[RMDB]
RNA sequence: GGGAACGACUCGAGUAGAGUCGAAAACGCUUGAUGGUCGCACGGCGAUGGCGAGCGGCGAAAGCCAGUGGAUCACUUCGCCCCAGGCGCGGCGUGAUGUACAACUACUGCGCGCGCAAAGUCAUGCGCGUCCAAGGGACUUCGGUCCCUUGGACGCAAAAGAAACAACAACAACAAC
Reactivity to 2A3 in 0.01 (KOAc 150mM, MgCl2 10mM, bicine 150mM(pH8.5), 24C), signal-to-noise 1, nucleotides 027 to 126: c030g000c020u000u080g040a050u080g140g000u100c030g000c090a080c100g130g000c000g070a030u000g080g000c080g010a060g080c020g020g010c020g070a040a030a000g010c040c010a010g060u070g060g060a050u000c000a000c060u020u010c000g010c000c000c000c070a000g010g070c010g000c040g080g040c000g040u030g000a100u070g010u080a090c050a150a030c200u060a010c040u060g010c040g000c000g000c000g000c000a060a050a000g080u080c020a080u100g030c010
Reactivity to DMS in 0.01 (KOAc 150mM, MgCl2 10mM, bicine 150mM(pH8.5), 24C), signal-to-noise 2, nucleotides 027 to 126: c080g010c020u010u010g010a070u000g020g020u020c050g040c020a110c130g000g000c020g000a090u000g000g030c090g020a100g000c060g000g010c000g000a080a030a170g020c050c010a110g050u010g000g010a150u000c050a020c040u010u000c010g020c000c000c080c100a170g000g000c150g020c160g000g020c120g050u000g000a070u000g000u000a060c130a090a160c150u000a090c050u000g000c080g000c000g030c040g040c060a060a050a130g020u020c090a080u000g000c060
An RNA of 177 nucleotides, treated with 2A3 and DMS and read out base by base. 2A3 is a SHAPE reagent: it acylates the 2'-hydroxyl of flexible nucleotides of all four kinds. The reactions ran in a buffer of 150 mM KOAc, 10 mM MgCl2 and 150 mM bicine (pH 8.5), at 24 C. DMS adducts were read by reverse transcription with MarathonRT. The 2A3 profile rests on 1,344 reads. For DMS, 1,112 sequencing reads were counted.